[RMDB]
RNA sequence: GGGAACGACUCGAGUAGAGUCGAAAAUGGGACCACCAGGUCGUGUAAUGAGGGGUGAACCGGCCCAGGUUGGCGACGGAGCAGGUCAAAUCCCCCGUGCUGAUCAGUAGUGGGAUCACACCUGACAAUAGACACUGCAGUGCAGCCUGAGUGACACCUAUCAUUGGUACUUCGGUACCAAUGAUAGAAAAGAAACAACAACAACAAC
Reactivity to DMS in 0.01 (KOAc 150mM, MgCl2 10mM, bicine 150mM(pH8.5), 24C), signal-to-noise 2, nucleotides 027 to 156: u010g010g020g010a100c020c030a060c020c020a110g010g040u000c030g040u000g010u000a070a100u000g000a140g020g000g070g010u000g020a080a090c050c000g010g000c000c000c020a050g010g020u010u000g040g020c060g010a090c040g040g000a100g060c030a060g000g020u000c080a050a100a090u000c000c000c000c010c000g010u000g010c080u020g020a050u000c060a110g030u010a140g020u000g000g000g020a090u000c050a080c040a070c020c010u000g000a080c090a160a100u000a170g020a110c020a050c050u010g000c020a110g040u010g020c040a060g000c010c020u000g000a120g020u000g020a140c050a070c040
Reactivity to 2A3 in 0.01 (KOAc 150mM, MgCl2 10mM, bicine 150mM(pH8.5), 24C), signal-to-noise 4, nucleotides 027 to 156: u070g000g000g070a030c000c010a000c020c040a050g030g030u020c050g020u060g040u160a120a140u130g030a140g030g020g000g000u020g050a040a040c060c010g050g010c000c050c030a030g020g060u060u110g060g020c050g030a020c020g020g020a050g060c040a040g010g050u060c030a000a060a190u070c000c000c010c000c010g020u050g010c020u020g040a100u050c040a030g140u190a050g020u100g010g050g000a010u050c030a010c010a020c020c010u040g020a030c050a020a140u060a060g020a020c010a010c100u120g020c040a040g030u030g040c010a040g000c030c020u050g030a050g020u040g000a010c000a040c050